RNA sequence: GGGAACGACUCGAGUAGAGUCGAAAAGCAUAAGUGGUAUGGCGCUGCCGGCAAACGGGCUCGUGCUAAGCGUGCCGCUAAAAGUGAGAAGGAUUCGGCUCCCACCCCCAAGGUUGCCCUGCCGGUCACACCCGUCAAAGUUCGCUUUGACGGGUGUAAAAGAAACAACAACAACAAC
Reactivity to 2A3 in 0.01 (KOAc 150mM, MgCl2 10mM, bicine 150mM(pH8.5), 24C), signal-to-noise 3, nucleotides 027 to 126: g070c020a020u040a170a100g000u010g060g020u110a090u070g140g040c020g000c010u010g020c000c000g030g000c050a060a080a210c120g040g030g000c020u030c110g100u190g060c010u040a100a020g040c000g040u050g000c000c000g000c020u080a060a000a000a000g230u220g010a060g090a130a100g110g010a050u180u000c010g010g010c000u090c000c010c020a060c030c000c000c010c000a000a040g040g000u090u020g010c000c000c010u050g000c020c000g010g010u050c020
Reactivity to DMS in 0.01 (KOAc 150mM, MgCl2 10mM, bicine 150mM(pH8.5), 24C), signal-to-noise 2, nucleotides 027 to 126: g000c080a130u070a110a090g000u030g000g000u000a060u030g000g000c040g010c140u000g000c010c030g030g000c070a010a140a120c130g000g000g020c040u010c040g010u010g000c100u010a100a210g000c030g020u010g020c040c000g010c040u000a020a040a100a130g020u020g000a040g000a120a190g010g020a100u030u000c000g000g000c070u000c000c030c020a300c010c010c020c000c090a080a100g000g020u000u000g000c020c010c000u000g000c000c020g010g010u020c240
Structure probing data (2A3 and DMS) for a 177-nucleotide construct. For 2A3, 1,378 sequencing reads were counted. The RNA was probed in 150 mM KOAc, 10 mM MgCl2 and 150 mM bicine (pH 8.5) at 24 C. 2A3 adducts were read by reverse transcription with SuperScript II with manganese.